[RMDB]
RNA sequence: GGGAACGACUCGAGUAGAGUCGAAAAUCAUAGCUUCACCAGCGCGACCUGGUCCUCCACGUGCUGGCCCGCGGCCGCGAGCUCAGCUUUUACCUUCCCGCCCACCUCCUCGCGCAGGUACACCGAACCCUUUCAGGAGAUUCGUCUCCUGAAAGGGAAAAGAAACAACAACAACAAC
Reactivity to DMS in 0.01 (KOAc 150mM, MgCl2 10mM, bicine 150mM(pH8.5), 24C), signal-to-noise 2, nucleotides 027 to 126: u020c080a110u010a080g000c060u000u000c070a070c060c060a040g000c050g020c040g000a100c070c040u020g010g030u000c010c020u000c020c020a160c140g020u000g030c040u000g020g040c030c010c020g020c030g010g010c130c090g030c060g000a070g010c040u010c040a040g010c000u000u000u000u000a080c070c070u000u000c060c000c000g010c030c020c020a070c010c000u010c020c050u010c080g040c070g010c020a040g010g000u000a090c110a100c060c050g010a110a160
Reactivity to 2A3 in 0.01 (KOAc 150mM, MgCl2 10mM, bicine 150mM(pH8.5), 24C), signal-to-noise 1, nucleotides 027 to 126: u070c000a040u050a120g030c040u150u100c080a040c050c030a030g000c020g000c020g070a110c020c010u000g010g010u020c030c040u040c000c000a060c070g040u020g000c020u020g000g000c010c000c000g050c010g060g030c080c120g100c030g010a000g020c000u050c200a050g020c040u020u020u140u070a070c030c000u040u050c030c010c030g050c020c000c010a030c010c020u000c000c020u010c000g010c020g010c030a000g000g060u060a040c070a050c020c030g060a100a080